Overview: Structure probing data (2A3 and DMS) for a 177-nucleotide construct. 2A3 adducts were read by reverse transcription with SuperScript II with manganese. Values cover nucleotides 27 to 126. For DMS the reverse transcriptase was MarathonRT. For DMS, 4,231 sequencing reads were counted.
RNA sequence: GGGAACGACUCGAGUAGAGUCGAAAAGAUAUGGAUCGUGACCCACUGAUAUUAUCGGAAACGAUAAUUAUCAAGGUGCACGAUCCUAAGUCAAAGCACGCUGUCAAGCUUCGGCUUGACAGCGUGCGAGAGUUACUAAGUUCGCUUAGUAACUCUCAAAAGAAACAACAACAACAAC
Reactivity to 2A3 in 0.01 (KOAc 150mM, MgCl2 10mM, bicine 150mM(pH8.5), 24C), signal-to-noise 2, nucleotides 027 to 126: g020a000u060a040u150g020g000a010u010c010g000u000g020a030c000c000c030a180c190u000g000a000u000a010u010u000a000u000c020g010g020a030a030a050c010g000a000u000a000a000u170u070a020u010c050a080a260g030g010u150g180c010a000c000g010a000u000c000c000u000a020a010g010u020c030a030a120a120g010c000a010c010g000c040u030g100u010c010a010a000g000c020u080u190c300g200g000c030u020u010g000a010c010a030g020c000g030u000g000c000
Reactivity to DMS in 0.01 (KOAc 150mM, MgCl2 10mM, bicine 150mM(pH8.5), 24C), signal-to-noise 2, nucleotides 027 to 126: g020a020u010a250u010g000g000a010u000c000g030u000g000a040c030c010c030a140c230u000g010a000u000a000u010u000a000u000c000g010g010a060a070a130c010g000a020u000a000a020u010u000a010u000c010a050a130g030g020u000g010c010a010c020g010a000u000c000c000u010a000a080g000u010c020a150a100a290g010c000a020c000g010c000u000g000u000c000a000a010g010c010u000u000c260g020g000c000u000u000g000a000c020a010g000c000g000u010g010c000